[RMDB]
RNA sequence: GGGAACGACUCGAGUAGAGUCGAAAAGAUAUGGAUCAUCUCUUGCUAUAAUCUUUGGUUUUAUAUCGACUCGGAAACGAGUCGAGUAUAAAACCAAAGGUAGCAAACGUGAGAUGAUCCUAAGUCACUUUAGUUAUUGGUUCGCCAAUAACUAAAGAAAAGAAACAACAACAACAAC
Reactivity to 2A3 in 0.01 (KOAc 150mM, MgCl2 10mM, bicine 150mM(pH8.5), 24C), signal-to-noise 5, nucleotides 027 to 126: g030a020u070a050u210g000g000a000u000c000a010u000c000u010c020u040u040g000c010u060a090u060a300a300u260c000u030u010u000g000g010u030u000u000u000a010u000a000u020c000g000a000c000u000c000g020g020a100a110a090c000g000a010g010u010c000g010a000g000u000a000u000a000a000a000a000c000c000a000a000a010g000g000u010a000g000c010a030a100a050c280g300u270g060a010g000a010u000g000a000u000c000c000u000a010a010g000u000c010a000
Reactivity to DMS in 0.01 (KOAc 150mM, MgCl2 10mM, bicine 150mM(pH8.5), 24C), signal-to-noise 5, nucleotides 027 to 126: g020a050u020a300u000g000g000a000u000c000a010u000c000u000c000u000u010g000c010u000a100u010a300a140u010c010u000u000u000g000g010u000u000u000u000a000u000a030u000c000g000a010c000u000c000g000g010a110a090a240c010g010a020g010u000c000g010a010g020u010a000u000a000a000a010a010c000c000a000a000a000g010g020u000a010g000c000a020a060a160c300g020u010g010a000g010a010u000g010a000u000c000c000u000a010a080g010u000c040a200